The record gives the reactivity of an RNA of 207 nucleotides to 2A3. Conditions: 150 mM KOAc, 10 mM MgCl2 and 150 mM bicine (pH 8.5), 24 C.

RNA sequence: GGGAACGACUCGAGUAGAGUCGAAAAACAGGCAUGAGCCACUGUGCCCGGCCACAUUUAUUUAUGAGAUUAAGUGACCAAGCUAUAUGCACCACAAAAACAGAGACCAUAUCUGUCUCUUUUCACGAUUGUAUUCUCAGAACUAUCACAGGAGUUACUCCUAAAUACGCUUCGGCGUAUUUAGGAGAAAAGAAACAACAACAACAAC
Reactivity to 2A3 in 0.01 (KOAc 150mM, MgCl2 10mM, bicine 150mM(pH8.5), 24C), signal-to-noise 1, nucleotides 027 to 156: a000c020a030g010g070c020a060u070g050a050g080c020c000a050c040u120g000u040g010c000c020c020g120g000c000c000a010c010a000u050u010u080a030u020u200u070a150u130g120a070g010a050u030u050a160a000g020u000g050a000c000c000a020a050g000c020u070a050u000a050u300g020c060a040c010c000a040c030a130a250a010a010a000c000a020g000a000g000a000c000c030a070u010a150u140c050u160g000u060c000u000c000u040u020u040u140c010a050c020g020a000u040u040g000u010a180u280u000c000u000c000a000g120a100a000c050u230a010u290c300a080c000a070g130g140a090g090u300u300a000